[RMDB]
RNA sequence: GGGAACGACUCGAGUAGAGUCGAAAAGUGAAGCGCAAAUCGCUCGUGGUGAAAUGCCUCGCUAUGGUGGUCAACAUGCGCAUUUGACUGAAGAACAACGUCAACAAUUUGAAGCAGAAGGACGCCACGGUCUCGAAUCUUUCGAGAUUCGAGACCGAAAAGAAACAACAACAACAAC
Reactivity to 2A3 in 0.01 (KOAc 150mM, MgCl2 10mM, bicine 150mM(pH8.5), 24C), signal-to-noise 2, nucleotides 027 to 126: g030u000g060a270a020g000c040g000c030a060a050a010u040c120g000c020u180c150g180u140g020g010u030g080a030a000a050u030g000c000c020u040c000g000c020u060a110u020g000g030u020g000g020u070c000a070a080c000a140u130g000c020g000c010a010u040u040u080g020a000c020u020g130a050a150g000a290a000c000a110a000c090g000u000c010a040a090c000a070a150u000u090u230g060a210a060g050c030a000g030a130a020g070g000a000c000g030c040c000a040
Reactivity to DMS in 0.01 (KOAc 150mM, MgCl2 10mM, bicine 150mM(pH8.5), 24C), signal-to-noise 1, nucleotides 027 to 126: g000u000g000a010a090g040c080g160c030a000a080a300u010c000g000c000u000c180g030u060g080g060u000g000a000a000a240u000g000c040c000u030c090g010c160u090a090u060g000g000u000g000g000u000c000a010a090c080a180u090g000c000g000c080a000u000u000u060g000a100c010u000g000a110a110g000a000a080c190a090a130c070g190u140c000a000a260c300a210a050u090u000u000g000a100a160g000c000a050g000a160a140g030g000a010c060g000c030c000a000